Chemical mapping of a 177-nucleotide RNA with 2A3 and DMS.
High DMS reactivity at an A or C suggests that its Watson-Crick edge is free.
For 2A3 the reverse transcriptase was SuperScript II with manganese.
Reactivities are given for positions 27 through 126.
For 2A3, 4,210 sequencing reads were counted.
DMS adducts were read by reverse transcription with MarathonRT.
RNA sequence: GGGAACGACUCGAGUAGAGUCGAAAAUGGCAUCAAUCUCGGUGGGCAUCUAUUCAGGCCAGGCGGUUCUCGAUCUGGACUACAUCGAAGAUUCCGGAGCCGAAACGGAUAUGAAUGUGGUCAUGACCAUUCCGAACCUAUUCGUAGGUUCGGAAUGAAAAGAAACAACAACAACAAC
Reactivity to 2A3 in 0.01 (KOAc 150mM, MgCl2 10mM, bicine 150mM(pH8.5), 24C), signal-to-noise 3, nucleotides 027 to 126: u070g020g000c020a050u020c020a100a110u040c030u010c070g020g020u060g020g040g000c030a030u020c040u100a150u050u140c080a050g070g000c020c000a010g060g000c040g070g020u140u010c050u000c040g110a210u010c030u110g020g020a000c010u040a030c030a030u060c040g080a110a020g030a130u100u000c030c030g020g060a020g050c030c010g020a040a030a010c020g030g000a020u030a030u190g090a190a010u070g020u040g020g020u020c020a060u100g070a040c020
Reactivity to DMS in 0.01 (KOAc 150mM, MgCl2 10mM, bicine 150mM(pH8.5), 24C), signal-to-noise 6, nucleotides 027 to 126: u000g010g030c040a060u000c070a080a100u000c040u000c040g010g030u000g010g010g010c090a070u000c060u000a110u000u000c100a080g020g020c030c020a070g000g010c070g010g000u000u000c050u010c050g010a080u000c050u000g000g000a030c030u000a040c050a040u000c040g010a200a060g010a150u020u000c010c020g000g000a110g010c050c080g000a030a070a100c050g000g010a030u000a070u010g000a060a050u000g010u000g010g010u000c010a110u000g000a110c130